[RMDB]
RNA sequence: GGGAACGACUCGAGUAGAGUCGAAAAAGGGUAAGGAGAGGGGGCAUGGAACGAAAGCGCAUUCUCACGGGUGACAGACCGACGGGGAAGCUGCACCUGGGACACUAUGUGGGUUCUCUCGCCAACAUAAAUGAUUAGUGUUCGCACUAAUCAUUUAAAAAGAAACAACAACAACAAC
Reactivity to DMS in 0.01 (KOAc 150mM, MgCl2 10mM, bicine 150mM(pH8.5), 24C), signal-to-noise 8, nucleotides 027 to 126: a070g010g010g010u010a090a090g020g010a100g010a080g010g000g010g000g020c100a050u010g000g010a080a070c120g000a070a080a110g020c070g010c060a080u000u000c050u010c030a100c060g000g000g010u000g000a170c090a040g010a080c040c030g000a130c210g010g010g000g000a110a080g000c030u010g010c020a040c030c010u000g010g000g010a050c120a060c130u010a040u000g020u000g000g000g000u000u000c040u000c050u000c070g000c050c050a060a080c150a110
Reactivity to 2A3 in 0.01 (KOAc 150mM, MgCl2 10mM, bicine 150mM(pH8.5), 24C), signal-to-noise 5, nucleotides 027 to 126: a000g060g010g010u090a060a050g070g040a100g030a060g020g030g010g020g000c050a030u060g030g020a060a030c050g040a090a030a030g070c050g000c030a060u060u000c010u010c030a030c010g000g000g030u030g030a100c010a030g080a080c010c030g080a100c080g120g020g010g010a030a020g020c020u010g010c000a020c000c000u010g000g020g010a020c020a010c070u100a070u110g020u040g020g040g010u050u020c020u010c000u000c040g010c020c010a040a020c040a050